An RNA of 177 nucleotides, treated with DMS and 2A3 and read out base by base. The 2A3 profile rests on 9,694 reads. The reactions ran in a buffer of 150 mM KOAc, 10 mM MgCl2 and 150 mM bicine (pH 8.5), at 24 C.

RNA sequence: GGGAACGACUCGAGUAGAGUCGAAAAUUGGCCGCGAGUAUUCAAAGAACUCUGCACGCAUACGGUCGCCUCAGUUCUUGACGGCCGUCGCGAGUUCGGUCCGCGAAUUCUGCUGCGGCUUCUGAGGUCCUAUUAGUCAGUUCGCUGACUAAUAGGAAAAAGAAACAACAACAACAAC
Reactivity to DMS in 0.01 (KOAc 150mM, MgCl2 10mM, bicine 150mM(pH8.5), 24C), signal-to-noise 6, nucleotides 027 to 126: u020u030g000g000c000c010g020c020g020a080g020u000a030u010u000c040a060a300a090g010a030a020c010u010c090u010g030c010a050c060g000c050a120u030a030c030g000g040u000c030g010c140c120u000c080a080g020u040u040c140u050u010g000a040c010g010g010c000c000g020u000c300g000c000g010a030g020u000u010c300g000g000u020c030c050g010c300g000a030a000u000u010c010u000g010c040u030g010c010g000g000c000u000u010c010u000g010a120g000g000
Reactivity to 2A3 in 0.01 (KOAc 150mM, MgCl2 10mM, bicine 150mM(pH8.5), 24C), signal-to-noise 9, nucleotides 027 to 126: u120u100g040g000c000c000g000c010g000a010g010u040a020u010u030c030a070a050a050g010a030a020c010u010c130u270g020c050a050c070g080c010a050u070a180c010g010g000u000c010g060c040c070u030c030a120g080u300u110c090u190u130g010a010c010g000g010c000c000g010u020c040g000c010g000a000g010u020u030c030g000g020u080c060c040g070c040g040a000a000u030u020c020u040g180c110u200g000c000g000g000c000u050u010c010u040g030a020g000g130